Structure probing data (2A3 and DMS) for a 177-nucleotide construct. The DMS profile rests on 7,305 reads. The 2A3 profile rests on 8,591 reads. 2A3 adducts were read by reverse transcription with SuperScript II with manganese. The RNA was probed in 150 mM KOAc, 10 mM MgCl2 and 150 mM bicine (pH 8.5) at 24 C.

[RMDB]
RNA sequence: GGGAACGACUCGAGUAGAGUCGAAAAGAUAUGGACCUCCCACCCCGAGCCUUUGAUCUCGGAAACGAGGGAGGCUCCGGCGUGGGAGGGUCCUAAGUCAAAACUAUCUAGCUUCGGCUAGAUAGAAUCCGUAUAAUAUGUUCGCAUAUUAUACGGAAAAAGAAACAACAACAACAAC
Reactivity to 2A3 in 0.01 (KOAc 150mM, MgCl2 10mM, bicine 150mM(pH8.5), 24C), signal-to-noise 3, nucleotides 027 to 126: g010a000u070a060u140g000g000a000c000c000u000c030c000c000a010c010c020c010c000g010a000g010c020c050u300u300u110g080a100u110c000u010c020g020g000a060a010a010c010g000a000g000g010g000a010g000g000c000u000c000c030g000g040c050g000u000g000g000g010a010g010g000g000u000c000c000u020a100a010g040u020c020a010a020a120a190c000u000a000u010c000u000a000g020c000u040u080c300g170g000c000u000a000g000a000u000a000g000a000a090
Reactivity to DMS in 0.01 (KOAc 150mM, MgCl2 10mM, bicine 150mM(pH8.5), 24C), signal-to-noise 6, nucleotides 027 to 126: g000a060u000a300u010g000g010a270c000c000u000c000c000c000a020c020c050c000c120g000a020g020c000c010u000u010u010g020a060u010c000u000c000g010g000a080a070a140c010g000a020g000g010g010a010g010g010c010u010c020c140g010g010c240g030u000g010g010g010a000g010g000g010u000c000c000u000a030a130g000u000c040a090a110a110a200c010u000a000u000c000u000a010g010c000u000u010c220g020g010c010u000a000g000a000u000a000g000a060a080